The data come from the RNA Mapping Database (RMDB), library OK2TRN. Chemical mapping of a 177-nucleotide RNA with 2A3 and DMS. The RNA was probed in 150 mM KOAc, 10 mM MgCl2 and 150 mM bicine (pH 8.5) at 24 C.
RNA sequence: GGGAACGACUCGAGUAGAGUCGAAAAAACGGCGUUGGUGAGGUUGGUCGUGGGAUAGCGCUUACCUUGUUUAACCUUGCAGACACACUUCUCGGCGGGCUUCCGACAGAAUUGAUUUCGUCGGCUGACAGGUACUACGGUUCGCCGUAGUACCUGUAAAAGAAACAACAACAACAAC
Reactivity to 2A3 in 0.01 (KOAc 150mM, MgCl2 10mM, bicine 150mM(pH8.5), 24C), signal-to-noise 3, nucleotides 027 to 126: a010a000c050g050g000c040g010u040u080g020g020u030g040a020g030g020u050u090g050g010u060c040g020u110g010g020g020a050u070a050g040c050g000c060u040u080a070c010c000u040u050g080u060u170u060a040a020c030c000u020u060g010c050a010g040a050c010a010c010a000c080u060u010c040u020c010g000g030c000g010g040g000c000u080u050c000c010g000a020c030a070g070a040a040u150u160g060a080u050u160u060c020g030u000c000g020g030c010u000g010
Reactivity to DMS in 0.01 (KOAc 150mM, MgCl2 10mM, bicine 150mM(pH8.5), 24C), signal-to-noise 7, nucleotides 027 to 126: a070a060c080g000g010c050g010u000u010g020g020u000g010a060g010g010u000u010g010g010u000c060g020u000g000g000g010a100u000a080g010c060g020c050u000u000a170c060c050u000u000g010u000u000u000a060a080c060c030u000u000g000c070a080g000a090c080a070c060a080c090u000u000c020u000c040g020g000c060g010g000g010c070u000u000c010c000g010a030c030a090g010a030a030u000u010g000a190u000u000u000c030g000u000c010g010g010c300u010g000

The 2A3 profile rests on 3,900 reads.
For DMS the reverse transcriptase was MarathonRT.
High 2A3 reactivity points to a flexible backbone, as in loops and unpaired stretches.